The record gives the reactivity of an RNA of 177 nucleotides to DMS. Conditions: 150 mM KOAc, 10 mM MgCl2 and 150 mM bicine (pH 8.5), 24 C.
[RMDB]
RNA sequence: GGGAACGACUCGAGUAGAGUCGAAAAGAUAUGGAUGAUGACUCCAGUUGUCAGAAUCCCCGGUCUCAAUCGGAAACGAUUGAGGACCCGGCGAUUCUUGGAUUUACUGGAGUCAUCAUCCUAAGUCCAUUUGAACGAUCUUCGGAUCGUUCAAAUGAAAAGAAACAACAACAACAAC
Reactivity to DMS in 0.01 (KOAc 150mM, MgCl2 10mM, bicine 150mM(pH8.5), 24C), signal-to-noise 1, nucleotides 027 to 126: g000a090u000a300u010g010g020a000u000g000a010u000g010a050c000u000c000c010a040g010u000u000g010u010c000a050g000a030a010u000c010c220c000c110g000g000u010c010u000c000a000a020u010c010g000g000a180a130a280c000g010a020u010u000g000a020g010g020a090c200c020c030g070g040c300g000a020u010u010c010u020u000g000g020a020u000u010u020a010c020u000g000g000a000g010u020c000a000u000c010a000u000c000c000u000a010a120g000u000c010
For DMS, 990 sequencing reads were counted.